[RMDB]
RNA sequence: GGGAACGACUCGAGUAGAGUCGAAAAAAAGAUAUGGAGUUUAGGGAGCUCACCCAAACGUUUGACGUAGAUCGGAAACGAUCUACCGAGUUUGGCGUGAGCGAAGAACUAAACUCCUAAGUCAAAAGAUGUUGAUAUACUUCGGUAUAUCAACAUCAAAAGAAACAACAACAACAAC
Reactivity to 2A3 in 0.01 (KOAc 150mM, MgCl2 10mM, bicine 150mM(pH8.5), 24C), signal-to-noise 3, nucleotides 027 to 126: a010a000a010g100a040u090a070u130g010g010a020g000u010u010u000a020g010g000g020a030g020c000u000c010a000c000c020c010a000a010a010c130g070u240u230u250g090a050c030g000u000a000g000a010u000c010g030g000a070a070a040c030g010a000u000c000u000a010c000c010g020a020g000u000u000u020g070g040c220g020u010g000a000g010c000g020a020a010g020a010a000c000u010a000a000a000c000u000c000c000u000a040a020g070u050c030a010a010a070a150
Reactivity to DMS in 0.01 (KOAc 150mM, MgCl2 10mM, bicine 150mM(pH8.5), 24C), signal-to-noise 4, nucleotides 027 to 126: a080a100a070g010a030u000a300u000g000g010a030g000u000u000u000a000g000g010g010a100g020c000u010c020a010c010c010c000a000a000a010c000g030u010u010u000g020a160c300g030u000a010g010a010u000c000g000g010a120a120a200c010g000a020u000c000u010a000c030c010g000a050g010u000u010u000g000g010c300g020u000g010a010g000c000g000a020a080g000a130a180c000u010a000a000a000c000u000c000c010u000a020a050g010u000c020a100a090a160a120

An RNA of 177 nucleotides, treated with 2A3 and DMS and read out base by base. The DMS profile rests on 4,436 reads. The reactions ran in a buffer of 150 mM KOAc, 10 mM MgCl2 and 150 mM bicine (pH 8.5), at 24 C. Values cover nucleotides 27 to 126. The data come from the RNA Mapping Database (RMDB), library TTRDES. The 2A3 profile rests on 8,906 reads.